[RMDB]
RNA sequence: GGGAACGACUCGAGUAGAGUCGAAAAGGGGUCGUGUAUUAGAGACCCGUCUUGGAUUUACAUACUGAAGCCUCCACGGUAUGUUGUCAGACGCUAUUCUACACGACGGAGGCACCCAAAACUUCAAACACAAGGCUUCGGCCUUGUGUUUGAAGAACUACUGCUCCAGUUUCGACUGGAGCAGUAGAAAAGAAACAACAACAACAAC
Reactivity to 2A3 in 0.01 (KOAc 150mM, MgCl2 10mM, bicine 150mM(pH8.5), 24C), signal-to-noise 2, nucleotides 027 to 156: g040g000g030g000u010c010g020u010g050u080a190u230u160a080g070a070g070a180c040c100c020g020u000c020u090u160g040g020a060u170u160u190a020c000a000u000a000c010u000g060a100a050g030c000c030u000c010c000a010c010g000g010u000a010u000g010u020u080g010u060c160a060g000a030c030g000c110u030a080u130u080c000u020a010c020a000c000g010a000c040g020g000a030g020g000c020a020c000c000c000a020a090a090a100c000u000u000c000a000a000a000c000a000c000a000a000g050g050c040u060u300c300g070g000c050c000u000u040g000u000g000u000u000u010g000a000a010g000a000a000

Overview: The record gives the reactivity of an RNA of 207 nucleotides to 2A3. Source: RMDB library RNAMAK, as collected in RNAgym. Values are in units of 0.01, from 0 to 300, in steps of 10. The RNA was probed in 150 mM KOAc, 10 mM MgCl2 and 150 mM bicine (pH 8.5) at 24 C.